An RNA of 177 nucleotides, treated with 2A3 and DMS and read out base by base. It was measured as part of the RMDB library TTRDEL. Reactivities are given for positions 27 through 126. For 2A3, 1,670 sequencing reads were counted.
[RMDB]
RNA sequence: GGGAACGACUCGAGUAGAGUCGAAAAGAUAUGGAAUAAGCGAAGAACUAAAUACGCUGUCGGAAACGAUUUCGAGCGUUUAGGGAGCUUAUUCCUAAGUCAAAACCCGACGCUUCGGCGUCGGGAACCAAAUGACCAUGUUCGCAUGGUCAUUUGGAAAAGAAACAACAACAACAAC
Reactivity to 2A3 in 0.01 (KOAc 150mM, MgCl2 10mM, bicine 150mM(pH8.5), 24C), signal-to-noise 2, nucleotides 027 to 126: g000a000u080a010u170g000g020a030a000u010a000a000g000c010g230a300a020g010a100a120c020u030a030a090a080u190a100c030g040c010u130g290u220c020g070g040a040a110a130c070g060a170u050u230u300c120g050a020g010c020g000u020u040u010a000g010g000g020a010g010c030u000u000a030u010u020c000c000u000a040a000g040u000c000a020a020a070a240c010c000c000g000a000c000g000c020u080u230c300g120g000c020g000u000c000g000g010g020a000a000
Reactivity to DMS in 0.01 (KOAc 150mM, MgCl2 10mM, bicine 150mM(pH8.5), 24C), signal-to-noise 1, nucleotides 027 to 126: g000a040u010a300u020g000g000a010a000u010a050a000g020c000g040a120a170g000a140a210c000u010a010a010a070u000a050c030g040c010u020g000u000c000g000g000a080a080a180c080g000a080u000u000u000c200g040a050g010c020g000u000u000u000a000g000g000g020a050g010c000u000u000a000u000u000c040c010u000a020a070g010u000c070a060a070a140a130c000c000c000g000a010c000g010c000u000u000c210g030g030c000g020u000c000g020g010g010a010a020